[RMDB]
Annotation: An RNA of 207 nucleotides, treated with DMS and 2A3 and read out base by base. The DMS profile rests on 4,102 reads.
RNA sequence: GGGAACGACUCGAGUAGAGUCGAAAAUGGGAGCUGGACACUGCCCUCCCCAGCAGCCAGAAGUCCUGAAGGAACCGUGUGUGACCCUCAAGACCAGACCGGGCCUGCCACACCAACCCUUCAAAGACCGCAGCGGUCCAGGCAAUCCAACGUGGGAUAAUUUAGCACUAUUCGUAGUGCUAAAUUAAAAAGAAACAACAACAACAAC
Reactivity to DMS in 0.01 (KOAc 150mM, MgCl2 10mM, bicine 150mM(pH8.5), 24C), signal-to-noise 2, nucleotides 027 to 156: u000g010g020g010a200g150c070u000g030g000a060c050a070c040u000g030c000c020c080u000c000c000c000c050a150g000c090a100g010c030c010a190g030a170a100g020u000c000c040u010g010a100a060g010g020a090a090c090c110g100u000g020u000g010u000g010a070c020c020c020u010c080a070a020g010a140c100c040a140g000a130c090c150g020g010g020c010c010u010g040c020c010a000c040a050c000c050a130a140c060c000c000u010u000c010a040a040a070g030a030c000c030g000c030a050g010c020g020g020u000c000c010a010g010g020c050a070a110u010c040c020a060a080c050g020u000g020g020g000a180
Reactivity to 2A3 in 0.01 (KOAc 150mM, MgCl2 10mM, bicine 150mM(pH8.5), 24C), signal-to-noise 3, nucleotides 027 to 156: u110g030g020g000a060g070c010u010g020g000a020c050a020c100u040g010c030c010c000u030c000c000c000c000a040g030c000a010g020c030c030a040g040a090a000g030u010c000c050u020g010a010a020g010g010a060a030c060c090g040u040g000u010g030u070g130a080c010c020c000u040c090a070a090g050a150c050c070a020g030a090c060c060g020g010g000c020c040u070g030c030c010a010c000a010c000c010a030a090c020c000c000u000u020c010a040a020a000g010a000c010c040g030c040a010g030c050g050g010u000c000c010a010g040g040c020a020a100u070c030c020a040a050c100g060u180g030g040g000a030
The reactions ran in a buffer of 150 mM KOAc, 10 mM MgCl2 and 150 mM bicine (pH 8.5), at 24 C.